[RMDB]
RNA sequence: GGGAACGACUCGAGUAGAGUCGAAAACAUUAGCCGUUCGCGGCUAAUGCCGACUGUCUUGUUUGAUGGUAGAGUGGAAGGACAGGAAGACCUUUUUAGAAAUCGCCCAUUCAUUCGUGAAUGGGAACAAUAAUGUUAGUUUCGACUAACAUUAUUGAAAAGAAACAACAACAACAAC
Reactivity to DMS in 0.01 (KOAc 150mM, MgCl2 10mM, bicine 150mM(pH8.5), 24C), signal-to-noise 9, nucleotides 027 to 126: c010a010u000u000a000g010c000c000g020u000u010c220g030c010g020g000c000u000a000a000u000g000c050c040g010a190c050u000g000u000c020u000u000g010u000u000u000g010a080u000g010g010u000a050g010a100g020u010g000g000a140a040g000g010a050c050a050g000g010a100a080g000a150c050c010u000u000u000u010u010a110g010a060a070a100u010c170g000c000c000c000a010u000u000c000a040u000u010c210g020u000g010a010a010u000g000g000g000a020a020
Reactivity to 2A3 in 0.01 (KOAc 150mM, MgCl2 10mM, bicine 150mM(pH8.5), 24C), signal-to-noise 9, nucleotides 027 to 126: c000a000u000u000a000g000c000c010g020u040u040c270g010c010g110g000c000u000a000a000u010g020c000c000g060a060c020u030g040u050c020u060u180g160u240u150u150g140a110u090g030g100u110a060g030a050g110u100g030g050a040a020g010g010a020c020a030g030g030a020a010g040a030c010c010u050u090u040u070u190a130g100a050a110a040u160c100g030c010c000c000a010u000u000c000a000u020u050c150g090u010g010a000a000u000g000g010g000a000a000